Chemical mapping of a 177-nucleotide RNA with DMS and 2A3. It was measured as part of the RMDB library OK1LIB. The reactions ran in a buffer of 150 mM KOAc, 10 mM MgCl2 and 150 mM bicine (pH 8.5), at 24 C. The DMS profile rests on 47,518 reads. 2A3 adducts were read by reverse transcription with SuperScript II with manganese.
[RMDB]
RNA sequence: GGGAACGACUCGAGUAGAGUCGAAAAACUAGUAUGUACAGGGGUGAGUUGACCUGUCAUCUAGACUGCUGACCAUCAACUCACCGGUCAGUUGGAUGAUGUCCACAGAGUACGACAUCAGUACUCAGUGUAAGGAAGCGUUCGCGUUUCUUUACACAAAAGAAACAACAACAACAAC
Reactivity to DMS in 0.01 (KOAc 150mM, MgCl2 10mM, bicine 150mM(pH8.5), 24C), signal-to-noise 9, nucleotides 027 to 126: a150c030u000a030g010u050a030u010g010u050a020c020a040g000g000g010g020u010g010a060g020u000u000g000a060c060c060u010g000u000c000a020u000c020u010a060g000a160c110u000g010c040u010g000a030c020c250a220u010c060a040a040c050u010c040a050c100c080g010g000u000c030a040g000u000u010g000g000a090u010g000a070u020g010u010c030c050a090c160a110g000a040g000u010a020c050g010a120c170a100u030c120a080g010u000a020c010u000c010a170
Reactivity to 2A3 in 0.01 (KOAc 150mM, MgCl2 10mM, bicine 150mM(pH8.5), 24C), signal-to-noise 9, nucleotides 027 to 126: a000c010u020a010g090u110a060u090g070u100a020c020a030g060g020g030g070u130g080a120g060u080u080g080a070c000c040u010g010u000c000a000u000c000u010a030g070a130c050u040g010c000u010g010a010c010c000a020u090c040a050a070c060u030c070a050c030c050g000g010u000c010a010g000u000u030g040g010a070u090g010a030u080g070u040c010c010a050c040a080g030a010g020u030a010c040g060a030c070a120u100c040a040g000u010a010c010u000c040a010